[RMDB]
Overview:
This 177-nucleotide RNA was probed chemically with 2A3 and DMS.

RNA sequence: GGGAACGACUCGAGUAGAGUCGAAAAGAUAUGGAUCCUAAGACGCUUUGAUCAUAUGCGCGGUCGGAAACGACACCCCAUAUGGGAGCGUUAUGGAUCCUAAGUCAAAUCGGCGUUCGCGCCGAAACAGGAUAGUAUUGUUCGCAAUACUAUCCUGAAAAGAAACAACAACAACAAC
Reactivity to 2A3 in 0.01 (KOAc 150mM, MgCl2 10mM, bicine 150mM(pH8.5), 24C), signal-to-noise 9, nucleotides 027 to 126: g030a000u080a040u150g000g000a010u010c010c000u100a240a120g090a030c010g040c030u300u230u130g070a100u180c020a010u020a000u030g130c140g040c130g050g020u020c010g020g040a050a090a030c010g020a010c020a230c050c040c000c010a000u000a000u010g020g020g010a010g000c000g000u020u020a020u070g000g000a000u000c000c000u010a050a010g010u000c010a020a040a210u050c000g010g000c020g040u060u080c290g000c020g010c070c000g000a020a000a010
Reactivity to DMS in 0.01 (KOAc 150mM, MgCl2 10mM, bicine 150mM(pH8.5), 24C), signal-to-noise 8, nucleotides 027 to 126: g010a060u000a300u010g010g010a010u000c000c000u000a150a230g000a010c010g010c010u000u000u010g000a100u010c010a010u000a000u000g010c270g020c230g010g000u010c010g000g000a120a060a160c010g000a020c010a100c050c040c120c040a020u000a010u000g000g000g000a020g020c000g010u000u000a290u000g010g000a020u000c010c010u000a010a080g010u010c030a060a100a110u000c000g000g010c000g020u000u010c210g010c010g030c000c000g010a000a060a120

The data come from the RNA Mapping Database (RMDB), library TTRDEL.